[RMDB]
RNA sequence: GGGAACGACUCGAGUAGAGUCGAAAAUAUCGUUAUUGUUUGCCCUAAUAUCCCGAUUCUAGGAUAAGAAGUAACGAAUAACACGGGGUAACUCUGUGCGGGCAAUACUGUGAAACUACCACUAUAAGGUAAGAAGACAGUUCGCUGUCUUCUUACCAAAAGAAACAACAACAACAAC
Reactivity to DMS in 0.01 (KOAc 150mM, MgCl2 10mM, bicine 150mM(pH8.5), 24C), signal-to-noise 2, nucleotides 027 to 126: u010a120u000c040g000u000u000a020u000u000g020u000u000u000g060c010c030c010u000a050a120u000a100u000c000c000c000g030a180u010u000c040u000a140g010g000a120u030a120a120g030a030a070g000u040a060a080c140g000a030a070u010a090a120c170a190c040g020g010g010g040u000a090a130c240u010c060u000g020u000g000c060g000g000g010c030a010a050u010a040c060u000g020u000g010a080a110a090c150u000a090c020c000a150c100u010a070u060a070a150
Reactivity to 2A3 in 0.01 (KOAc 150mM, MgCl2 10mM, bicine 150mM(pH8.5), 24C), signal-to-noise 1, nucleotides 027 to 126: u050a000u070c050g020u060u010a030u000u050g050u050u000u020g000c000c010c000u030a100a020u040a010u000c050c000c000g030a040u100u000c040u110a140g130g050a020u070a300a050g130a080a000g050u070a100a010c060g060a090a100u130a050a050c120a000c060g000g000g000g000u020a070a040c020u010c070u130g000u080g020c030g000g000g000c000a000a010u020a030c040u070g040u030g210a070a060a010c050u070a040c020c000a010c050u200a150u050a300a060